Chemical mapping of a 207-nucleotide RNA with 2A3 and DMS.
[RMDB]
RNA sequence: GGGAACGACUCGAGUAGAGUCGAAAAGUGGAGGCGAAAGUCACCCUCCUCGCAUCGCAAGUUCGUGCUUACGACUUACACGUAGGGCGAGGGGUGGGCGAAAGUUGCCAUGAGACCGUAACUUUCGAUGAGGCGGGACUGUUCGCAGUCCCGCCAAGCUUCUUCUUUACUUCGGUAAAGAAGAAGCAAAAGAAACAACAACAACAAC
Reactivity to 2A3 in 0.01 (KOAc 150mM, MgCl2 10mM, bicine 150mM(pH8.5), 24C), signal-to-noise 3, nucleotides 027 to 156: g080u050g010g030a040g020g040c060g020a100a050a010g100u110c050a100c040c000c010u040c000c000u000c000g000c020a100u070c040g020c080a030a020g040u200u100c030g010u110g140c090u170u270a010c020g000a020c020u040u050a040c080a010c030g070u090a130g060g150g020c020g010a010g000g010g000g030u230g010g040g000c010g000a000a000a000g020u040u030g020c000c010a000u100g030a020g030a090c040c030g000u000a000a010c010u000u030u040c010g070a110u120g060a040g000g020c000g010g000g000a000c010u010g050u080u150c210g000c110a000g000u000c000c000c010g000c000c000a000a000
Reactivity to DMS in 0.01 (KOAc 150mM, MgCl2 10mM, bicine 150mM(pH8.5), 24C), signal-to-noise 1, nucleotides 027 to 156: g040u010g010g000a090g030g020c060g000a090a060a100g000u000c020a040c010c000c000u000c000c000u000c010g060c060a120u000c070g010c050a000a040g020u000u030c050g020u000g020c190u010u010a070c030g000a060c030u010u000a060c100a090c090g020u020a060g050g020g040c050g010a000g000g000g000g000u010g000g000g010c010g000a020a010a040g000u000u000g000c000c010a200u000g000a110g050a130c110c010g030u000a040a080c020u000u000u000c000g020a110u010g010a140g020g000c040g040g030g000a050c000u000g000u000u000c250g000c010a070g000u020c000c030c000g000c000c000a000a090

The RNA was probed in 150 mM KOAc, 10 mM MgCl2 and 150 mM bicine (pH 8.5) at 24 C.
DMS (dimethyl sulfate) methylates the pairing face of unpaired adenines and cytosines.
The data come from the RNA Mapping Database (RMDB), library M2RFPK.
As a SHAPE reagent, 2A3 marks flexible, mostly unpaired nucleotides at the ribose 2'-OH.
Values cover nucleotides 27 to 156.